Structure probing data (DMS and 2A3) for a 177-nucleotide construct. The data come from the RNA Mapping Database (RMDB), library M2PK90. 2A3 adducts were read by reverse transcription with SuperScript II with manganese. The DMS profile rests on 2,783 reads. The reactions ran in a buffer of 150 mM KOAc, 10 mM MgCl2 and 150 mM bicine (pH 8.5), at 24 C.
RNA sequence: GGGAACGACUCGAGUAGAGUCGAAAAAGAAAAGCGCAUGAGAAGAUCACUGAUAGCCAAAAACGCGAUUAUAAACGGAAAUCUAAGAGCAACAGCGUCCGGCCUAACCGAAAGAUGCCGAAAAAAACACAUAGUCUAGAUUCGUCUAGACUAUGUGAAAAGAAACAACAACAACAAC
Reactivity to DMS in 0.01 (KOAc 150mM, MgCl2 10mM, bicine 150mM(pH8.5), 24C), signal-to-noise 4, nucleotides 027 to 126: a100g010a080a080a100a130g000c120g050c070a060u000g000a090g050a100a080g000a060u030c030a060c130u010g000a100u010a060g010c030c040a030a050a060a130a080c100g010c040g000a050u000u010a070u010a030a050a070c060g000g000a030a080a050u020c030u000a060a090g020a090g000c020a030a040c110a050g030c060g000u000c090c030g000g000c030c060u010a050a090c070c040g010a050a060a050g010a050u000g000c020c050g020a000a000a040a070a050a030a120
Reactivity to 2A3 in 0.01 (KOAc 150mM, MgCl2 10mM, bicine 150mM(pH8.5), 24C), signal-to-noise 2, nucleotides 027 to 126: a000g090a010a050a000a020g060c040g010c040a040u130g080a030g040a150a020g010a020u040c020a010c070u050g040a060u050a050g000c020c010a040a050a020a030a050c040g000c010g000a020u080u120a120u180a100a080a000c040g010g040a090a070a010u060c060u070a120a040g010a010g090c010a000a030c020a040g000c030g060u030c000c000g000g030c010c000u020a050a060c020c000g040a070a020a000g020a000u010g030c000c000g020a120a050a010a010a000a000a000